RNA sequence: GGGAACGACUCGAGUAGAGUCGAAAACGCAUAGGACACGAUUUUACCCAAGUACAGUGCACGGCGGAUUUUCUCGAUAAAUUCAGCUUUAUCACCCUCGAAAGGUUUCACUGUAGGGCCAGUCAACAACAUACUGUCCGUUCGCGGACAGUAUGUUAAAAGAAACAACAACAACAAC
Reactivity to DMS in 0.01 (KOAc 150mM, MgCl2 10mM, bicine 150mM(pH8.5), 24C), signal-to-noise 3, nucleotides 027 to 126: c060g040c080a070u000a140g030g000a090c080a080c050g010a060u000u010u000u000a150c050c010c010a110a100g030u010a060c090a050g020u030g010c220a040c110g000g020c030g010g010a060u000u000u000u010c110u000c140g000a110u000a020a060a070u010u020c080a030g000c030u000u000u000a060u010c130a100c040c020c020u000c210g000a040a090a100g040g010u000u000u000c060a000c080u000g030u000a050g010g010g020c060c040a080g010u010c080a060a060c180
Reactivity to 2A3 in 0.01 (KOAc 150mM, MgCl2 10mM, bicine 150mM(pH8.5), 24C), signal-to-noise 2, nucleotides 027 to 126: c030g020c050a080u080a110g050g050a010c010a000c130g100a060u040u010u120u250a100c020c020c000a050a010g090u040a030c010a020g020u010g070c080a020c050g100g020c020g000g000a000u020u030u060u060c160u050c100g100a110u100a130a080a020u100u040c050a000g000c000u000u100u020a060u100c050a010c020c000c000u020c010g150a170a000a060g040g030u000u070u100c020a020c000u020g010u020a030g010g040g060c030c000a000g070u110c010a030a050c000